[RMDB]
RNA sequence: GGGAACGACUCGAGUAGAGUCGAAAACGAGUUCACGGCGAGUAUUACCCAAACGGGCGUGCAAGAGGUGGGGCUUGAAGCCGCGGACGGCCGCCUCAUAACGCGCGCGGUGUUUGCCUCGCCGGUUGACCUCGCGGGCGACGUAACUGUCACGCUCGCGUGCCGAUAUUUUCGAAUAUCGGCACGCAAAAGAAACAACAACAACAAC
Reactivity to 2A3 in 0.01 (KOAc 150mM, MgCl2 10mM, bicine 150mM(pH8.5), 24C), signal-to-noise 2, nucleotides 027 to 156: c040g010a000g030u030u000c010a010c030g000g010c000g010a010g030u090a170u150u300a130c040c040c000a000a000a000c000g010g020g020c000g000u010g000c010a090a190g030a040g090g120u200g030g090g020g010c020u220u300g170a160a000g020c010c000g040c120g050g090a050c040g010g000c010c000g000c000c000u010c000a060u090a090a080c100g010c000g020c010g000c020g030g080u030g000u000u010u040g040c000c000u020c000g000c000c000g000g010u010u070g000a000c000c010u020c010g030c000g000g000g000c010g010a050c040g060u110a150a040c090u190g000u090c040a020c100g000c020u000c010
Structure probing data (2A3) for a 207-nucleotide construct. High 2A3 reactivity points to a flexible backbone, as in loops and unpaired stretches. Conditions: 150 mM KOAc, 10 mM MgCl2 and 150 mM bicine (pH 8.5), 24 C.